The data come from the RNA Mapping Database (RMDB), library M2PK50.
Structure probing data (2A3 and DMS) for a 177-nucleotide construct.
The DMS profile rests on 3,488 reads.
2A3 adducts were read by reverse transcription with SuperScript II with manganese.
Reactivities are given for positions 27 through 126.
[RMDB]
RNA sequence: GGGAACGACUCGAGUAGAGUCGAAAACAUGGAUCGUUCGCGAUCCAUGGCAGCUGGUGGUGGGACCAGCCGACCCAGGCUUUUGGCAUCCCAGCCUUUCCAAUCCAGCCUAUUUCGAUAGGCUGAAUGUUUGAUUAUCGUUCGCGAUAAUCAAACAAAAAGAAACAACAACAACAAC
Reactivity to 2A3 in 0.01 (KOAc 150mM, MgCl2 10mM, bicine 150mM(pH8.5), 24C), signal-to-noise 2, nucleotides 027 to 126: c010a000u010g010g000a000u000c020g000u090u060c280g000c010g130a000u010c010c000a000u000g000g020c040a020g000c020u020g000g050u060g040g060u060g030g080g050a050c020c000a000g000c000c010g080a110c030c020c060a060g020g000c000u120u150u250u290g040g010c020a030u040c000c000c000a040g100c010c030u010u050u030c030c000a020a070u020c040c000a000g010c020c000u010a020u050u070u080c220g090a000u000a000g000g000c010u010g010a040a050
Reactivity to DMS in 0.01 (KOAc 150mM, MgCl2 10mM, bicine 150mM(pH8.5), 24C), signal-to-noise 3, nucleotides 027 to 126: c010a010u020g000g010a000u000c000g020u000u020c230g030c000g010a010u000c010c000a000u010g000g030c140a070g000c010u000g000g010u010g000g030u010g010g000g010a120c030c030a030g000c000c060g000a100c040c050c030a150g010g000c040u000u000u010u010g010g000c020a040u000c010c010c020a070g010c020c050u000u000u000c010c020a150a090u010c090c000a000g000c000c000u000a010u000u000u020c170g000a020u000a000g010g020c000u000g010a030a020